Chemical mapping of a 207-nucleotide RNA with DMS and 2A3. The RNA was probed in 150 mM KOAc, 10 mM MgCl2 and 150 mM bicine (pH 8.5) at 24 C. DMS adducts were read by reverse transcription with MarathonRT. The data come from the RNA Mapping Database (RMDB), library RSTRND. 2A3 is a SHAPE reagent: it acylates the 2'-hydroxyl of flexible nucleotides of all four kinds.
RNA sequence: GGGAACGACUCGAGUAGAGUCGAAAAGUGGGUCGCGAAACAACUCAGGGCAUGCCGAGCACCAGUACGCUCGUUAAACCACUGGAACACUACAAACGCCAACGACGAGCGUUUCGCUCUCGCCGCUUAAGCGGUGAGCCGCUGCACUGAUCUGUCCGUCUUUACAACUGUUCGCAGUUGUAAAGACAAAAGAAACAACAACAACAAC
Reactivity to DMS in 0.01 (KOAc 150mM, MgCl2 10mM, bicine 150mM(pH8.5), 24C), signal-to-noise 1, nucleotides 027 to 156: g070u010g010g010g000u010c100g040c110g000a150a090a200c060a030a060c010u000c020a070g010g020g000c020a080u000g000c100c020g020a080g030c030a120c000c000a200g030u010a100c070g060c020u000c030g000u000u000a060a050a050c000c020a100c030u000g020g000a140a150c100a080c040u000a100c070a040a030a060c010g010c010c030a030a140c090g020a070c110g010a040g000c040g030u010u000u010c090g000c030u010c010u010c000g000c030c000g030c020u000u010a120a160g020c020g020g000u010g010a030g010c070c130g000c010u000g000c010a100c050u010g020a280u000c010u000g010u000c080c110
Reactivity to 2A3 in 0.01 (KOAc 150mM, MgCl2 10mM, bicine 150mM(pH8.5), 24C), signal-to-noise 4, nucleotides 027 to 156: g040u020g010g010g010u070c030g020c010g070a020a070a050c050a060a080c030u010c060a070g010g040g000c040a050u140g040c050c020g000a020g000c010a020c000c000a000g020u040a030c010g010c010u010c000g070u010u040a040a060a020c020c010a010c030u000g000g040a030a030c060a050c060u300a060c040a060a130a010c030g000c020c000a090a030c090g120a020c030g010a030g020c020g010u020u030u030c020g010c000u040c000u000c010g000c000c000g000c050u280u290a210a030g010c010g000g000u010g000a000g010c000c030g020c030u070g020c010a040c050u060g030a100u030c030u050g080u060c020c040